[RMDB]
RNA sequence: GGGAACGACUCGAGUAGAGUCGAAAAUUGGUGAAUGAGGCAUAUGACACCCUUGGUAAGUUCGGUGAUGUCGAAUGGUUUCUGUCCGAUUCUUCCACGGGAGAUUCAGCAGCUGCUGGAACUAAACAGCUGAUCUCAGCUUGAGUAAGUUGAGAGGGAACCGUCUAUCUUUCGAGAUAGACGGUUCAAAAGAAACAACAACAACAAC
Reactivity to 2A3 in 0.01 (KOAc 150mM, MgCl2 10mM, bicine 150mM(pH8.5), 24C), signal-to-noise 2, nucleotides 027 to 156: u020u020g030g000u040g050a130a130u080g010a030g020g050c050a010u110a030u140g020a060c010a100c030c000c000u020u050g070g010u160a050a060g000u060u060c000g010g020u050g030a090u090g000u050c030g030a040a060u130g120g020u050u040u040c040u080g080u000c000c030g000a000u000u070c010u050u010c010c040a040c070g010g000g000a070g000a040u080u080c050a020g000c020a030g020c020u090g000c000u020g030g090a080a050c020u080a120a040a080c010a000g020c020u040g050a150u060c020u010c030a030g000c000u060u080g050a050g240u190a060a000g020u000u010g030a040g000a000g050g060
Reactivity to DMS in 0.01 (KOAc 150mM, MgCl2 10mM, bicine 150mM(pH8.5), 24C), signal-to-noise 1, nucleotides 027 to 156: u000u000g000g000u000g000a160a090u020g010a050g000g020c020a050u000a120u020g000a200c090a150c030c010c030u000u000g030g020u000a050a090g010u000u010c040g010g020u000g030a140u010g000u000c010g020a090a150u000g030g010u000u000u000c010u000g000u000c000c020g020a080u010u000c030u000u000c030c060a100c160g070g040g000a080g030a100u000u000c030a120g060c060a110g000c030u000g010c000u000g000g000a050a150c140u000a070a050a120c030a040g020c020u000g010a070u000c010u000c020a010g010c040u010u000g010a250g030u000a020a010g010u010u010g000a030g010a090g000g030

An RNA of 207 nucleotides, treated with 2A3 and DMS and read out base by base. The data come from the RNA Mapping Database (RMDB), library OK3TST. The reactions ran in a buffer of 150 mM KOAc, 10 mM MgCl2 and 150 mM bicine (pH 8.5), at 24 C. For DMS, 2,345 sequencing reads were counted. For 2A3 the reverse transcriptase was SuperScript II with manganese.